[RMDB]
Structure probing data (2A3 and DMS) for a 177-nucleotide construct.
For DMS the reverse transcriptase was MarathonRT.
The RNA was probed in 150 mM KOAc, 10 mM MgCl2 and 150 mM bicine (pH 8.5) at 24 C.
RNA sequence: GGGAACGACUCGAGUAGAGUCGAAAAGAAAAACUCAGCACUGCGGAGUGAUUGGAUGGGUCCUAUCUUUUGAGAGAUCAGCUGUUCGUUGCCUUCUCCCGAGCAAAGAAACAUGCAAGCGCUGCGGCUAUGAUGAUAGCUUCGGCUAUCAUCAUAGAAAAGAAACAACAACAACAAC
Reactivity to 2A3 in 0.01 (KOAc 150mM, MgCl2 10mM, bicine 150mM(pH8.5), 24C), signal-to-noise 1, nucleotides 027 to 126: g030a030a080a000a010a030c030u040c050a020g030c020a040c110u110g040c070g030g040a020g050u050g020a080u080u090g020g060a030u030g040g030g060u030c030c000u040a060u070c000u010u180u130u060g110a100g010a030g000a070u070c030a000g030c000u020g060u100u070c020g010u030u040g040c000c000u050u000c050u000c030c000c010g070a000g020c010a030a070a000g050a020a120a020c020a000u070g000c010a070a000g040c020g020c030u040g000c010g030g010
Reactivity to DMS in 0.01 (KOAc 150mM, MgCl2 10mM, bicine 150mM(pH8.5), 24C), signal-to-noise 2, nucleotides 027 to 126: g000a070a060a070a130a100c020u010c050a040g000c070a060c090u000g000c000g010g020a100g030u020g000a100u000u010g010g000a060u000g010g000g010u000c010c020u010a080u000c020u000u000u020u000g010a080g000a120g010a060u010c060a080g010c040u010g000u000u010c060g010u010u000g000c010c040u010u000c070u000c010c040c010g000a100g000c060a020a080a040g010a040a050a060c090a040u010g000c060a060a110g020c070g010c040u000g010c040g020g000